[RMDB]
RNA sequence: GGGAACGACUCGAGUAGAGUCGAAAAGCCCAUACUGGGUACAACGAGCUUGCGAGAAGCACUUUCUCUGUUUGUGUCACGCCAGACAGAUAAAUUGCUGGUAGCCGAUGAACAGGGGCAACCAUUGAAUUACGACUCUGUUCGCAGAGUCGUAAUUAAAAGAAACAACAACAACAAC
Reactivity to DMS in 0.01 (KOAc 150mM, MgCl2 10mM, bicine 150mM(pH8.5), 24C), signal-to-noise 3, nucleotides 027 to 126: g000c020c010c010a180u020a300c110u010g010g000g020u010a070c070a060a120c080g010a120g010c080u010u010g050c050g020a100g020a110a070g010c030a030c100u000u000u010c050u000c010u000g020u000u000u010g010u000g000u000c160a070c290g000c100c010a020g020a010c010a040g000a060u000a040a040a030u000u010g000c000u000g010g020u000a070g020c060c030g000a070u010g020a050a040c040a080g010g000g000g010c080a030a100c050c040a090u010u000g000
Reactivity to 2A3 in 0.01 (KOAc 150mM, MgCl2 10mM, bicine 150mM(pH8.5), 24C), signal-to-noise 2, nucleotides 027 to 126: g000c000c000c020a020u120a040c040u070g150g010g100u140a050c000a050a000c040g020a030g050c030u080u110g040c070g050a130g100a150a000g010c000a000c000u030u010u030c010u000c020u000g030u020u000u000g050u020g080u080c040a030c100g040c020c010a020g010a050c000a000g020a000u060a060a040a020u030u020g010c000u020g000g040u010a010g000c030c020g060a030u060g010a020a000c020a030g000g040g000g000c010a010a030c000c020a010u030u180g080
The record gives the reactivity of an RNA of 177 nucleotides to DMS and 2A3. The reactions ran in a buffer of 150 mM KOAc, 10 mM MgCl2 and 150 mM bicine (pH 8.5), at 24 C. The DMS profile rests on 1,759 reads. 2A3 adducts were read by reverse transcription with SuperScript II with manganese.